This 177-nucleotide RNA was probed chemically with DMS. The RNA was probed in 150 mM KOAc, 10 mM MgCl2 and 150 mM bicine (pH 8.5) at 24 C. Values cover nucleotides 27 to 126. It was measured as part of the RMDB library OK2TST.
[RMDB]
RNA sequence: GGGAACGACUCGAGUAGAGUCGAAAAAGAUCCGUAAUUAAGGGCUAAAACUUGCGUAAAAUCCUUAAAAUGCCUGGUAUCGUUUUCAAGCCGUAAAAUCGUGUCCCUUAGUUCUUUAGAAAAGCCCAUCCUGGUAUGGGUUCGCCCAUACCAGGAUAAAAGAAACAACAACAACAAC
Reactivity to DMS in 0.01 (KOAc 150mM, MgCl2 10mM, bicine 150mM(pH8.5), 24C), signal-to-noise 1, nucleotides 027 to 126: a110g000a070u000c070c070g000u020a060a110u000u000a020a020g010g000g020c100u020a080a040a140a080c180u000u000g010c100g010u000a030a110a140a100u000c040c020u010u030a030a090a070a070u000g010c030c060u020g030g040u000a020u010c020g020u000u000u000u000c060a070a130g040c070c020g000u000a020a030a060a070u000c120g000u020g000u000c040c000c010u000u000a130g000u000u000c040u040u000u000a110g000a050a090a090a130g000c010c010c020